[RMDB]
RNA sequence: GGGAACGACUCGAGUAGAGUCGAAAAUUUGUGACCUGAAUAAAGAGUACAACAUCUCUCAAAAGGUAACAAUAUGAUGUUUCAGGAAAUUAGAGAAGUUAAGAGACUUUGCUGUAUUUACUAUACAGAUAGUUGACUGACAGCUGAGCCCGGACCAAGUCCCAUAAAUGUUCGCAUUUAUGGGACUAAAAGAAACAACAACAACAAC
Reactivity to DMS in 0.01 (KOAc 150mM, MgCl2 10mM, bicine 150mM(pH8.5), 24C), signal-to-noise 2, nucleotides 027 to 156: u000u000u000g040u020g000a040c000c000u050g020a080a170u000a120a080a090g000a030g050u010a180c070a110a170c300a300u000c000u000c030u010c020a140a150a300a110g080g020u000a020a010c000a020a070u000a120u010g000a110u010g000u000u010u000c040a150g000g010a020a000a160u000u000a070g020a120g010a080a100g010u000u000a040a100g000a300g010a020c000u000u000u000g020c010u010g030u020a030u000u000u010a070c110u010a080u000a100c070a000g000a080u000a070g010u010u010g020a230c100u010g020a050c030a070g020c010u010g000a080g020c020c060c000g000g040a100c030c020a070
Reactivity to 2A3 in 0.01 (KOAc 150mM, MgCl2 10mM, bicine 150mM(pH8.5), 24C), signal-to-noise 2, nucleotides 027 to 156: u040u010u020g020u030g010a010c000c000u020g000a070a000u070a160a110a000g010a010g030u080a090c050a130a010c000a260u090c030u000c000u020c030a000a030a000a000g010g010u030a040a030c010a020a000u080a060u120g060a020u050g070u060u050u020c010a020g010g060a010a080a130u100u070a090g020a000g010a170a030g030u070u100a130a000g030a000g020a020c000u060u060u140g050c000u060g000u020a000u010u120u020a070c090u010a010u000a030c010a010g050a010u030a010g030u010u040g020a080c010u020g000a000c000a010g010c010u010g000a000g010c000c000c030g000g080a050c040c060a010